[RMDB]
RNA sequence: GGGAACGACUCGAGUAGAGUCGAAAAAGCCUCAAGCAGGGAUCUGCGUGCUCACUGUUCUCUUGCCAAGACACGGAGUGGACAGUAACUCGCCUUUACACGGGCGUUGGUAUCAGUUCUUGCUUCGCUUAUGAUUUAUGUUCGCAUAAAUCAUAAGAAAAGAAACAACAACAACAAC
Reactivity to DMS in 0.01 (KOAc 150mM, MgCl2 10mM, bicine 150mM(pH8.5), 24C), signal-to-noise 9, nucleotides 027 to 126: a100g010c030c020u000c120a030a020g010c010a030g010g000g000a020u010c020u010g020c230g030u000g010c030u000c300a050c030u010g010u000u000c010u000c010u000u010g020c050c040a110a090g010a110c260a120c170g010g000a050g010u000g000g000a010c020a030g010u000a120a290c080u000c010g010c000c010u000u000u010a110c260a100c300g000g000g010c010g010u000u000g010g010u000a030u000c030a030g010u000u000c020u000u000g010c010u000u000c200g010
Reactivity to 2A3 in 0.01 (KOAc 150mM, MgCl2 10mM, bicine 150mM(pH8.5), 24C), signal-to-noise 9, nucleotides 027 to 126: a000g100c010c000u020c030a010a000g000c010a000g020g000g020a040u120c010u040g030c050g070u010g000c020u040c030a010c000u010g010u030u000c020u000c000u030u170g170c030c020a180a070g200a160c060a030c160g020g000a010g000u020g000g010a000c000a000g010u010a020a020c010u010c020g000c000c010u070u120u200a100c130a040c100g010g000g000c010g020u040u060g010g000u020a010u040c010a010g000u010u010c000u010u010g000c000u040u030c020g000